[RMDB]
RNA sequence: GGGAACGACUCGAGUAGAGUCGAAAAACACUUGGAAAAGUAGAAGAAGGGGGAGGGGGAACUGUUGCUAAAUUCUUAGCUAGCUAUGGAAUAAGAACAAUAGACAUGGGACCUGCUGUUAUAAGCAGAUCCUAUCAUGAUUCGUCAUGAUAGGAUCAAAAGAAACAACAACAACAAC
Reactivity to 2A3 in 0.01 (KOAc 150mM, MgCl2 10mM, bicine 150mM(pH8.5), 24C), signal-to-noise 1, nucleotides 027 to 126: a000c080a030c010u030u020g030g010a190a000a020a000g030u090a080g020a120a010g020a020a080g000g000g020g010g000a020g050g060g000g030g010a070a000c010u010g020u120u040g020c010u080a080a100a070u070u000c030u030u080a010g000c040u010a010g020c010u060a050u130g020g060a050a030u040a110a000g050a030a000c010a000a020u020a020g010a020c050a100u050g030g010g020a040c000c010u030g020c020u020g020u170u110a130u060a210a010g090c040a020
Reactivity to DMS in 0.01 (KOAc 150mM, MgCl2 10mM, bicine 150mM(pH8.5), 24C), signal-to-noise 2, nucleotides 027 to 126: a030c100a050c040u020u020g000g030a060a100a090a060g000u000a130g010a080a160g010a170a100g020g000g010g000g030a050g000g000g000g010g000a030a110c090u000g010u000u040g000c020u010a020a030a070u000u000c060u000u000a060g000c050u000a080g000c050u000a040u030g010g000a050a030u000a040a080g000a080a080c030a040a040u000a050g000a100c110a100u000g000g010g000a090c080c040u020g000c020u000g010u000u000a090u010a100a030g030c080a090
Chemical mapping of a 177-nucleotide RNA with 2A3 and DMS. For DMS the reverse transcriptase was MarathonRT. Values cover nucleotides 27 to 126. Conditions: 150 mM KOAc, 10 mM MgCl2 and 150 mM bicine (pH 8.5), 24 C. For 2A3 the reverse transcriptase was SuperScript II with manganese.